[RMDB]
Chemical mapping of a 177-nucleotide RNA with DMS and 2A3. It was measured as part of the RMDB library TTRDEL. DMS adducts were read by reverse transcription with MarathonRT. The reactions ran in a buffer of 150 mM KOAc, 10 mM MgCl2 and 150 mM bicine (pH 8.5), at 24 C. For 2A3 the reverse transcriptase was SuperScript II with manganese. High 2A3 reactivity points to a flexible backbone, as in loops and unpaired stretches.
RNA sequence: GGGAACGACUCGAGUAGAGUCGAAAAGAUAUGGACGUAUGGCCUCGCAUAUCACAGUCGGAAACGAUCACAGUAUGAACUACGAGGUACGUCCUAAGUCAAAGUCGCGAUCUUCGGAUCGCGACAAGUUAUCCUUCGACUUCGGUCGAAGGAUAACAAAAGAAACAACAACAACAAC
Reactivity to DMS in 0.01 (KOAc 150mM, MgCl2 10mM, bicine 150mM(pH8.5), 24C), signal-to-noise 2, nucleotides 027 to 126: g000a040u010a300u010g000g010a060c010g020u000a030u010g070g010c020c000u010c000g010c000a030u000a060u010c040a090c240a210g010u010c010g000g000a070a130a160c010g010a000u000c060a160c300a220g020u010a030u010g010a060a040c140u010a180c010g000a020g010g020u000a040c010g010u000c000c000u000a010a060g020u000c030a130a120a100g000u000c000g070c000g020a000u000c000u000u050c170g000g000a010u000c000g000c020g000a000c000a010a030
Reactivity to 2A3 in 0.01 (KOAc 150mM, MgCl2 10mM, bicine 150mM(pH8.5), 24C), signal-to-noise 2, nucleotides 027 to 126: g010a000u060a040u130g000g000a010c000g020u030a120u260g300g010c020c000u000c020g030c030a040u020a010u180c040a000c030a080g030u020c020g000g020a060a060a060c030g000a030u130c040a020c030a070g050u060a010u070g070a130a130c100u140a060c300g000a000g000g020u020a000c000g010u000c010c000u010a090a000g030u000c050a140a050a060g000u000c000g000c010g000a000u000c020u020u120c300g170g010a000u000c000g000c010g000a020c000a000a000